RNA sequence: GGGAACGACUCGAGUAGAGUCGAAAAGAAGCGAAGCUGGGAUUAAUGUCUCACUUUUUAGUAUUAAAGUCUUAUUCAGGCUCAUUCGGGUUGAAGACAUUGUCAGAUGGGGAGUUUGGCUGGGGCGGAGGACAGAAAGUUUCGACUUUCUGUCCUCAAAAGAAACAACAACAACAAC
Reactivity to DMS in 0.01 (KOAc 150mM, MgCl2 10mM, bicine 150mM(pH8.5), 24C), signal-to-noise 3, nucleotides 027 to 126: g010a110a100g010c110g000a020a040g020c140u010g010g040g010a010u010u000a110a080u050g000u000c010u000c030a050c000u000u000u010u000u000a130g000u040a110u020u010a100a170a130g000u020c000u020u010a170u010u000c050a140g040g000c000u000c040a130u020u000c020g010g010g000u000u000g000a080a060g000a140c060a050u030u000g000u000c110a070g000a050u000g000g000g010g000a070g000u040u000u010g000g030c080u030g000g000g000g000c130g000
Reactivity to 2A3 in 0.01 (KOAc 150mM, MgCl2 10mM, bicine 150mM(pH8.5), 24C), signal-to-noise 6, nucleotides 027 to 126: g030a030a000g060c010g030a000a000g020c090u020g010g030g000a020u100u150a210a060u300g050u010c010u010c010a020c000u040u040u040u090u090a070g030u040a040u170u200a200a060a020g050u000c010u030u160a240u130u080c050a030g010g000c000u010c010a010u040u020c020g020g050g000u030u060g030a050a000g020a000c010a050u040u130g110u140c050a030g040a080u060g020g010g010g010a060g060u020u100u050g070g020c070u040g010g020g020g010c060g060

Source: RMDB library RFM100, as collected in RNAgym. An RNA of 177 nucleotides, treated with DMS and 2A3 and read out base by base. For DMS the reverse transcriptase was MarathonRT. The RNA was probed in 150 mM KOAc, 10 mM MgCl2 and 150 mM bicine (pH 8.5) at 24 C. The DMS profile rests on 4,299 reads. For 2A3 the reverse transcriptase was SuperScript II with manganese.